[RMDB]
RNA sequence: GGGAACGACUCGAGUAGAGUCGAAAAUCGACGAGAGCGACCGUCGGCGGUUCUUGGACCUCGCCGCCAGCGCCGACAUCGUCGUCGACUGUGGUCUUCCGGGACAGGCCGCCGCGUACGGGGCAUCUCAAGUACGCGUGUUCGCACGCGUACUUGAAAAAGAAACAACAACAACAAC
Reactivity to 2A3 in 0.01 (KOAc 150mM, MgCl2 10mM, bicine 150mM(pH8.5), 24C), signal-to-noise 1, nucleotides 027 to 126: u050c000g030a030c020g010a000g020a030g170c050g100a140c070c040g040u040c000g030g010c000g000g060u300u280c090u070u100g000g080a080c000c010u050c050g000c040c010g000c050c010a010g050c000g000c020c000g020a000c020a230u210c090g110u020c010g020u000c000g060a200c020u060g020u030g030g000u010c000u120u040c060c050g020g000g000a020c020a020g040g030c000c020g000c000c020g020c030g020u060a040c040g030g030g020g020c010a140u010c030
Reactivity to DMS in 0.01 (KOAc 150mM, MgCl2 10mM, bicine 150mM(pH8.5), 24C), signal-to-noise 2, nucleotides 027 to 126: u010c020g010a080c090g010a050g000a130g010c020g010a080c120c030g000u000c020g010g010c010g000g010u000u010c040u010u050g000g000a150c050c020u010c150g010c100c200g000c030c030a020g020c070g000c040c010g010a020c000a120u010c260g000u000c040g000u000c020g020a040c000u010g000u010g010g020u000c110u000u010c130c070g020g010g000a070c140a070g000g010c000c000g000c010c010g000c300g030u000a040c060g030g000g010g000c030a150u000c050

Record summary: Conditions: 150 mM KOAc, 10 mM MgCl2 and 150 mM bicine (pH 8.5), 24 C. An RNA of 177 nucleotides, treated with 2A3 and DMS and read out base by base. The 2A3 profile rests on 946 reads. For 2A3 the reverse transcriptase was SuperScript II with manganese.